RNA sequence: GGGAACGACUCGAGUAGAGUCGAAAAGAGUCACUCUCUCAGAGAGAGUGAGACUGAGACAGUGUGAGAGACAGACUGUGUCUCACUGUGACACUGAGAGACAGUGUCACACUCUGACAGUCAGUGAGGAAAUGCACUACUUCGGUAGUGCAUUUCCAAAAGAAACAACAACAACAAC
Reactivity to DMS in 0.01 (KOAc 150mM, MgCl2 10mM, bicine 150mM(pH8.5), 24C), signal-to-noise 2, nucleotides 027 to 126: g000a070g010u000c020a020c010u000c010u000c020u000c180a140g030a180g000a020g000a010g010u000g000a040g000a100c060u000g000a080g000a090c080a050g010u000g000u000g000a060g020a140g010a050c030a140g000a060c100u000g020u000g000u000c000u000c000a030c050u010g020u010g000a020c000a020c000u000g000a210g010a170g000a140c030a010g010u000g010u000c000a010c010a050c040u000c020u000g000a100c050a000g000u000c020a120g000u010g000a190
Reactivity to 2A3 in 0.01 (KOAc 150mM, MgCl2 10mM, bicine 150mM(pH8.5), 24C), signal-to-noise 2, nucleotides 027 to 126: g040a000g050u000c000a020c020u020c000u000c010u040c130a070g120a010g010a000g000a000g230u010g010a020g010a000c050u030g010a030g060a090c030a050g060u050g020u040g120a090g040a020g040a090c010a050g090a070c060u080g030u030g070u080c000u000c020a000c020u000g010u020g000a000c000a000c000u010g000a100g020a010g060a300c010a000g000u000g010u010c000a000c000a010c000u030c010u000g000a040c000a000g020u040c020a020g030u020g130a080